[RMDB]
Conditions: 150 mM KOAc, 10 mM MgCl2 and 150 mM bicine (pH 8.5), 24 C. Structure probing data (2A3) for a 207-nucleotide construct.
RNA sequence: GGGAACGACUCGAGUAGAGUCGAAAACAUUACGAAUUCAGUCGCAAAUUGUAGAAUUAGCUACUCUACGAUUUAGUGAGCGUUAGUAACGUUGUAAUAAAAUAUAGUCUUUGGAAGGAUUAUAUUGGAGCCGCGGACAAGUUCGCUUGUCCGCGAACAUGAUAAUCGGCUUCGGCCGAUUAUCAUGAAAAGAAACAACAACAACAAC
Reactivity to 2A3 in 0.01 (KOAc 150mM, MgCl2 10mM, bicine 150mM(pH8.5), 24C), signal-to-noise 1, nucleotides 027 to 156: c050a050u140u150a020c010g040a110a060u100u210c060a080g120u050c010g000c010a000a040a000u000u010g000u000a000g040a010a050u080u020a050g020c020u040a040c000u020c000u020a000c010g010a000u000u010u110a060g000u000g060a080g090c020g050u070u050a050g010u110a230a020c110g000u010u010g080u020a060a080u030a150a220a000a000u010a010u010a010g000u010c060u110u070u200g200g020a080a100g060g000a010u010u000a000u000a000u040u020g000g080a030g160c040c010g000c020g010g010a000c000a010a010g050u060u160c140g020c150u000u000g010u020c040c000g000c000g000a000a000